The record gives the reactivity of an RNA of 177 nucleotides to 2A3 and DMS.
[RMDB]
RNA sequence: GGGAACGACUCGAGUAGAGUCGAAAAGAUAUGGAUCCCUGACGAAUCUAGGGUCGGAAACGACCCAUAGACUAUCAGGGAGUCCUAAGUCAAAACGCUCUAUCGGUGUUCGCACCGAUAGAGCGAACAGUAAUUAAAACUUCGGUUUUAAUUACUGAAAAGAAACAACAACAACAAC
Reactivity to 2A3 in 0.01 (KOAc 150mM, MgCl2 10mM, bicine 150mM(pH8.5), 24C), signal-to-noise 1, nucleotides 027 to 126: g010a020u020a000u090g000g000a000u010c000c000c000u010g000a020c050g140a120a190u020c010u020a010g040g000g000u000c000g020g000a000a100a040c000g000a000c040c000c000a000u000a000g000a010c070u050a020u040c000a000g020g000g010a010g030u000c020c000u010a060a010g030u010c020a030a090a110a150c000g000c020u000c000u000a010u000c010g020g020u050g050u080u100c300g040c060a000c000c000g000a010u000a000g000a010g000c010g000a000a000
Reactivity to DMS in 0.01 (KOAc 150mM, MgCl2 10mM, bicine 150mM(pH8.5), 24C), signal-to-noise 3, nucleotides 027 to 126: g000a040u000a220u000g000g000a280u010c000c000c000u000g000a020c170g010a060a080u000c000u000a010g010g000g000u000c000g030g010a050a040a110c010g000a010c010c000c000a040u000a000g010a040c300u010a300u010c000a010g000g010g000a030g000u020c000c010u000a030a090g000u000c020a070a090a110a180c050g010c020u000c010u000a010u000c010g000g010u000g010u010u010c180g000c020a000c000c000g010a000u000a000g000a000g010c020g000a020a050
For DMS, 3,276 sequencing reads were counted. Conditions: 150 mM KOAc, 10 mM MgCl2 and 150 mM bicine (pH 8.5), 24 C. The 2A3 profile rests on 3,553 reads.